This 177-nucleotide RNA was probed chemically with 2A3 and DMS. DMS (dimethyl sulfate) methylates the pairing face of unpaired adenines and cytosines. It was measured as part of the RMDB library OK2TST. DMS adducts were read by reverse transcription with MarathonRT. The reactions ran in a buffer of 150 mM KOAc, 10 mM MgCl2 and 150 mM bicine (pH 8.5), at 24 C.
[RMDB]
RNA sequence: GGGAACGACUCGAGUAGAGUCGAAAAAGGCUGAAACAAUAGUUAAUACCAGCAAUUUGCCGGUGCCAAGCCGUUUUUCCAUCUGCCCGGCCAGAUACCACCACCACAUGAGGUUAAACAGGAUAUGGUUACUAGACUCAUUCGUGAGUCUAGUAACAAAAGAAACAACAACAACAAC
Reactivity to 2A3 in 0.01 (KOAc 150mM, MgCl2 10mM, bicine 150mM(pH8.5), 24C), signal-to-noise 3, nucleotides 027 to 126: a000g030g000c020u030g060a050a060a040c060a150a200u140a180g090u080u110a060a030u040a160c020c040a000g030c040a150a150u090u060u240g030c050c000g020g010u040g030c020c010a050a000g010c010c010g020u060u010u010u050u020c010c010a020u000c010u040g030c000c010c000g000g020c020c000a010g020a030u050a050c010c010a010c010c010a020c000c010a030c010a090u080g060a050g050g000u040u080a070a070a020c030a030g030g000a070u080a050u200g130
Reactivity to DMS in 0.01 (KOAc 150mM, MgCl2 10mM, bicine 150mM(pH8.5), 24C), signal-to-noise 4, nucleotides 027 to 126: a090g010g020c010u000g010a120a100a090c120a110a120u010a080g020u000u010a120a120u010a070c060c020a040g010c030a120a160u020u010u000g010c030c030g000g010u000g010c090c100a080a080g020c020c010g000u000u000u010u000u000c020c020a100u010c060u000g010c030c040c030g010g000c020c050a040g010a090u000a100c040c010a030c040c030a060c040c040a050c060a070u000g000a080g010g000u010u000a020a080a080c090a080g000g010a080u000a070u000g010